This 177-nucleotide RNA was probed chemically with 2A3 and DMS. For 2A3, 962 sequencing reads were counted. Source: RMDB library M2PK90, as collected in RNAgym. For 2A3 the reverse transcriptase was SuperScript II with manganese. Conditions: 150 mM KOAc, 10 mM MgCl2 and 150 mM bicine (pH 8.5), 24 C.

[RMDB]
RNA sequence: GGGAACGACUCGAGUAGAGUCGAAAAGACGAACGAAAACACAAAUGUUCCACGGUGCAGAAGGGUCCCUCACAUGAGGAUCACCCAUGAAACUCGGACAGGAUAUGCUUUUGGGAAAAAGAGAGAAGGCAGUAUUAAUCUUCGGAUUAAUACUGCCAAAAGAAACAACAACAACAAC
Reactivity to 2A3 in 0.01 (KOAc 150mM, MgCl2 10mM, bicine 150mM(pH8.5), 24C), signal-to-noise 1, nucleotides 027 to 126: g050a020c020g030a060a020c010g030a040a000a080a000c000a030c010a040a110a110u060g040u140u010c030c010a040c080g050g000u020g010c030a010g020a210a130g040g020g000u020c030c030c000u000c030a200c020a090u300g010a030g030g010a000u080c030a000c010c000c000a000u030g000a010a010a020c050u030c070g010g000a000c010a020g040g030a050u080a010u230g040c000u000u060u040u070g010g030g010a000a100a070a060a000g140a020g000a010g060a150a070
Reactivity to DMS in 0.01 (KOAc 150mM, MgCl2 10mM, bicine 150mM(pH8.5), 24C), signal-to-noise 1, nucleotides 027 to 126: g010a100c090g010a130a080c100g000a060a010a020a040c040a050c080a050a150a100u010g000u000u000c000c030a070c120g000g000u000g020c010a090g000a110a110g010g000g010u000c090c000c000u020c010a150c250a160u020g000a010g030g000a010u000c170a000c010c010c000a140u010g000a060a020a060c010u030c180g000g010a040c080a030g000g010a080u000a040u000g000c000u000u000u000u020g000g000g000a060a050a020a070a020g000a080g010a170g000a080a070